This 177-nucleotide RNA was probed chemically with DMS.
For DMS, 746 sequencing reads were counted.
Reactivities are given for positions 27 through 126.
DMS adducts were read by reverse transcription with MarathonRT.
The RNA was probed in 150 mM KOAc, 10 mM MgCl2 and 150 mM bicine (pH 8.5) at 24 C.

[RMDB]
RNA sequence: GGGAACGACUCGAGUAGAGUCGAAAAGAUAUGGACUUUGGAAGGCGAGCUGACUAACCGUUUGACGAGCAUCGGAAACGAUGCUCCGAGGUUAGAACAGCGAUGAGCCUUCCAAAGUCCUAAGUCACUGGGUAGUAAACUUCGGUUUACUACCCAGAAAAGAAACAACAACAACAAC
Reactivity to DMS in 0.01 (KOAc 150mM, MgCl2 10mM, bicine 150mM(pH8.5), 24C), signal-to-noise 1, nucleotides 027 to 126: g000a010u030a300u000g010g030a030c000u000u000u000g030g000a020a000g020g000c000g030a150g050c030u020g000a300c000u000a010a000c000c000g050u010u000u010g030a300c300g000a010g010c000a010u030c000g010g000a060a110a180c000g010a000u000g030c010u020c000c040g010a070g010g000u000u000a030g000a080a080c000a010g000c000g020a080u010g000a250g030c000c020u000u020c020c000a000a010a000g000u030c000c000u000a000a120g030u010c040a300